RNA sequence: GGGAACGACUCGAGUAGAGUCGAAAAGAUAUGGAGUGGUGGCAUCGAAGAACUGAUCUAUAUCGGAAACGAUAUAGGUUUGGGGAGAUGAGCCACUCCUAAGUCAAAAGCAGACUUCGGUCUGCAAGAGUAAUCACGACUUCGGUCGUGAUUACUCAAAAGAAACAACAACAACAAC
Reactivity to 2A3 in 0.01 (KOAc 150mM, MgCl2 10mM, bicine 150mM(pH8.5), 24C), signal-to-noise 1, nucleotides 027 to 126: g010a030u040a000u070g010g000a030g040u010g000g060u060g240g260c050a000u030c080g180a300a170g000a200a110c020u000g000a010u030c000u000a010u010a020u000c030g000g000a030a040a000c000g000a000u000a000u000a020g010g050u030u070u260g000g000g030g000a200g000a010u010g010a000g040c010c000a000c000u040c010c010u030a000a000g010u000c000a050a000a100a100g010c000a000g000a010c060u050u150c300g110g020u000c020u030g000c020a000a020
Reactivity to DMS in 0.01 (KOAc 150mM, MgCl2 10mM, bicine 150mM(pH8.5), 24C), signal-to-noise 1, nucleotides 027 to 126: g010a090u020a300u000g000g000a000g010u000g000g050u000g020g030c000a000u000c010g000a140a050g050a150a230c060u010g010a000u000c000u020a000u000a000u000c000g000g000a120a030a130c000g020a000u000a000u000a000g000g000u000u000u000g000g000g000g000a140g000a030u000g000a300g020c020c000a000c000u000c000c000u000a000a070g000u010c050a110a030a120a080g000c000a000g000a000c000u000u030c120g020g030u000c000u000g030c010a040a000